[RMDB]
RNA sequence: GGGAACGACUCGAGUAGAGUCGAAAACUCAAUCACUACGGUGAUUGAGAAUGCUUACGCCUCAAUAAAGCUUGACUUGAGUGCCUCCAGCAGAUAUAGACUGAAACAUUUAGUAUGGUCAAGCAGGGAGCAACAGCUCGAGUACGCUCGAGCUGAACACCUCAGCUCGAUUCGUCGAGCUGAGGUGAAAAGAAACAACAACAACAAC
Reactivity to 2A3 in 0.01 (KOAc 150mM, MgCl2 10mM, bicine 150mM(pH8.5), 24C), signal-to-noise 1, nucleotides 027 to 156: c000u000c000a000a000u020c000a010c030u040a000c290g110g000u000g000a000u000u000g000a000g000a010a110u200g000c000u000u040a080c120g040c060c000u080c060a110a240u120a200a090a000g010c000u000u040g020a010c020u130u040g000a000g080u080g060c060c010u090c090c000a010g030c040a000g040a040u140a090u080a030g100a120c000u050g020a050a030a000c040a070u110u060u140a110g070u120a220u260g000g000u010c000a000a000g000c030a030g040g020g000a070g020c040a000a170c000a000g030c000u010c000g000a000g000u000a000c300g060c030u000c000g010a000g000c010u000g000a000a000
Overview
Chemical mapping of a 207-nucleotide RNA with 2A3. The reactions ran in a buffer of 150 mM KOAc, 10 mM MgCl2 and 150 mM bicine (pH 8.5), at 24 C. It was measured as part of the RMDB library OK3TST. Values cover nucleotides 27 to 156.